Record summary:
The record gives the reactivity of an RNA of 177 nucleotides to 2A3 and DMS. The reactions ran in a buffer of 150 mM KOAc, 10 mM MgCl2 and 150 mM bicine (pH 8.5), at 24 C. For 2A3 the reverse transcriptase was SuperScript II with manganese.

RNA sequence: GGGAACGACUCGAGUAGAGUCGAAAAAUUCAAAUACAAGGUAUAACUAAAGAGCAUAUUAGGUUGUACGAUCUAAUUUUUAGAAGGUUUAUAGCGAGCCAAAUGAAGCCAUUUAUUGCUAUAGAAAAUCUUCCCUAACUUUCGAGUUAGGGAAGAUAAAAGAAACAACAACAACAAC
Reactivity to 2A3 in 0.01 (KOAc 150mM, MgCl2 10mM, bicine 150mM(pH8.5), 24C), signal-to-noise 1, nucleotides 027 to 126: a000u080u040c060a130a100a010u270a120c080a190a000g080g040u050a100u000a060a020c020u070a100a210a000g060a080g150c080a010u100a080u290u040a150g030g000u000u000g020u070a080c100g020a000u000c000u070a130a050u090u130u000u100u240a020g020a190a000g060g000u000u060u090a030u080a000g020c000g020a010g030c000c120a010a010a000u050g010a120a000g050c020c020a020u080u090u100a060u000u120g000c000u000a010u030a010g210a000a110a080
Reactivity to DMS in 0.01 (KOAc 150mM, MgCl2 10mM, bicine 150mM(pH8.5), 24C), signal-to-noise 2, nucleotides 027 to 126: a150u030u000c040a090a110a070u020a090c230a110a090g020g010u000a060u000a030a060c010u000a030a060a110g000a130g000c160a080u000a060u000u000a100g000g000u000u000g020u030a020c070g000a080u000c060u010a010a020u020u010u020u000u010a020g020a040a070g040g000u000u010u000a010u000a030g010c010g000a050g010c140c140a090a060a070u000g000a120a140g010c110c000a090u010u010u010a050u000u020g010c050u000a030u000a110g010a030a090a090
For DMS, 893 sequencing reads were counted.